[RMDB]
RNA sequence: GGGAACGACUCGAGUAGAGUCGAAAAACUAGUAUGUACAGGGGUGAGUUGACCUGUCAUCUAGACUGCUGACCAUCAACUCACCGGUCAGCUGGAUGAUGUCCACAGAGUACGACAUCAGUAUUCAGUGUAUGGAUGCCUUCGGGUAUCUAUACACAAAAGAAACAACAACAACAAC
Reactivity to DMS in 0.01 (KOAc 150mM, MgCl2 10mM, bicine 150mM(pH8.5), 24C), signal-to-noise 9, nucleotides 027 to 126: a260c010u000a010g000u060a020u000g000u070a010c000a010g010g000g000g010u010g000a080g020u000u000g000a070c020c010u000g000u000c000a000u000c010u000a010g000a170c060u000g000c010u000g000a010c000c060a140u020c080a040a050c070u010c050a070c130c120g000g010u000c000a010g000c000u010g000g010a120u000g010a020u000g000u000c000c100a130c170a150g010a130g010u020a110c250g000a010c020a010u000c010a060g010u020a050u010u020c080a120
Reactivity to 2A3 in 0.01 (KOAc 150mM, MgCl2 10mM, bicine 150mM(pH8.5), 24C), signal-to-noise 9, nucleotides 027 to 126: a000c010u010a010g060u120a060u060g070u100a010c000a010g030g030g040g060u140g090a140g060u060u060g100a080c000c010u000g000u000c000a000u000c000u010a020g070a110c050u040g000c000u000g000a000c000c010a050u110c040a050a080c060u030c080a050c030c040g000g000u000c000a000g000c010u020g030g020a060u050g000a000u010g020u010c030c010a070c080a100g120a020g080u100a050c050g010a000c010a010u010c010a010g040u050a150u050u100c050a020